[RMDB]
RNA sequence: GGGAACGACUCGAGUAGAGUCGAAAAGGUGACAGAGUGAUACUGUCUCAAAAACAAACAAAAAAAACCCCAACUCUUUGAUUUUGUUCACAAUUCUGUGGGUUAGGAAUUCUGGAACGGACUCAGCUGGGUACUUCUCACUUGGGAUAUCUCAUUCCGACAUUCUGCUAUUCGUAGCAGAAUGUCGAAAAGAAACAACAACAACAAC
Reactivity to 2A3 in 0.01 (KOAc 150mM, MgCl2 10mM, bicine 150mM(pH8.5), 24C), signal-to-noise 1, nucleotides 027 to 156: g100g000u020g000a010c000a000g020a050g090u050g040a020u080a190c020u010g000u000c010u010c060a140a180a050a050a030c100a020a080a070c160a010a110a080a050a000a030a050a080c000c000c000c000a010a110c020u110c080u130u140u020g010a050u080u180u120u170g050u060u060c110a070c050a300a200u090u030c010u050g070u060g030g060g000u080u040a020g040g030a060a090u070u060c080u200g050g020a070a000c010g050g050a070c060u050c080a010g020c040u010g010g000g050u010a060c040u080u000c020u010c040a060c020u070u060g020g000g040a050u060a070u160c020u010c080a020u140u170c100
This 207-nucleotide RNA was probed chemically with 2A3. 2A3 adducts were read by reverse transcription with SuperScript II with manganese. Reactivities are given for positions 27 through 156. The reactions ran in a buffer of 150 mM KOAc, 10 mM MgCl2 and 150 mM bicine (pH 8.5), at 24 C. Reactivities are rounded to 0.1 and cut off at 0 and 3. The data come from the RNA Mapping Database (RMDB), library OK3TST.